[RMDB]
RNA sequence: GGGAACGACUCGAGUAGAGUCGAAAAUGUAAUAAGUAGAUCCACUUUUUUAUCAAUGGCUUCUUUUACAACGGCAGGACGUAUAUCUAACGUGGUCAUGAUGGUUUGAAGCGGUUUAUUGAGUGUAUCACUUUUAAUUAUUCGUAAUUAAAAGUGAAAAAGAAACAACAACAACAAC
Reactivity to DMS in 0.01 (KOAc 150mM, MgCl2 10mM, bicine 150mM(pH8.5), 24C), signal-to-noise 6, nucleotides 027 to 126: u010g010u010a070a060u010a060a090g010u000a080g010a110u010c030c010a100c040u010u010u010u010u020u010a060u020c090a040a050u000g000g010c020u000u000c010u000u010u000u000a050c070a060a100c100g010g010c040a060g010g000a050c030g020u000a040u000a080u010c140u000a060a070c100g010u000g000g010u000c020a050u000g010a070u000g000g010u000u000u000g000a030a040g020c050g010g010u000u000u000a030u010u000g000a080g010u010g010u010a150
Reactivity to 2A3 in 0.01 (KOAc 150mM, MgCl2 10mM, bicine 150mM(pH8.5), 24C), signal-to-noise 3, nucleotides 027 to 126: u110g000u070a040a070u040a180a090g060u060a040g030a060u030c030c010a070c060u190u140u000u040u070u120a090u080c060a070a020u020g120g010c000u030u000c000u000u170u060u050a140c040a060a010c030g030g000c010a010g070g060a010c010g050u050a070u020a040u240c130u040a060a030c010g010u020g010g020u030c000a010u080g050a070u080g030g060u030u090u060g010a010a000g020c020g030g040u060u080u040a060u060u110g040a060g040u120g030u060a050